[RMDB]
RNA sequence: GGGAACGACUCGAGUAGAGUCGAAAAGUUAUGCCUUCUUAUGGAUGAUGAUCGGCCUCUUGGGCCUUGCCACGGCUAUUGCGAUCCCUUUGCUUAACAAACUGGCUUCCAAGAUCGGCGUGGCCUAAUCCGCGUGCAGGUUCGCCUGCACGCGGAUAAAAGAAACAACAACAACAAC
Reactivity to 2A3 in 0.01 (KOAc 150mM, MgCl2 10mM, bicine 150mM(pH8.5), 24C), signal-to-noise 1, nucleotides 027 to 126: g000u050u000a040u180g300c000c000u130u020c060u160u190a100u120g030g010a020u050g030a090u120g060a000u000c020g000g000c000c000u000c010u020u090g070g000g030c000c000u040u070g040c000c000a140c050g020g000c030u060a070u110u230g000c070g010a000u030c000c010c090u040u070u090g050c050u060u140a070a000c090a000a150a000c000u090g040g000c000u030u000c020c090a110a040g000a040u090c050g000g000c120g100u010g000g020c010c000u040a100